[RMDB]
RNA sequence: GGGAACGACUCGAGUAGAGUCGAAAAGAUAUGGAGCCAUAUGUAGAGCAACAGCUUAUUUUUAUGGUCAGCUCGGAAACGAGCUGAGCCAUAAAAAUAAGACAUGCUUGAAAUGGCUCCUAAGUCACAGAGAUGAACUGUUCGCAGUUCAUCUCUGAAAAGAAACAACAACAACAAC
Reactivity to DMS in 0.01 (KOAc 150mM, MgCl2 10mM, bicine 150mM(pH8.5), 24C), signal-to-noise 1, nucleotides 027 to 126: g000a020u030a300u010g010g000a000g010c000c040a040u000a080u020g010u000a180g000a010g020c000a050a190c300a150g030c000u000u000a000u000u000u000u000u000a000u000g000g040u010c000a010g010c010u000c000g000g000a080a120a270c010g000a000g020c000u000g020a060g020c010c000a010u000a000a000a000a000a000u010a000a000g010a030c110a120u010g010c030u000u000g000a100a040a050u000g010g000c000u000c020c000u000a000a040g010u020c040a200

Structure probing data (DMS) for a 177-nucleotide construct. The RNA was probed in 150 mM KOAc, 10 mM MgCl2 and 150 mM bicine (pH 8.5) at 24 C. It was measured as part of the RMDB library TTRINS.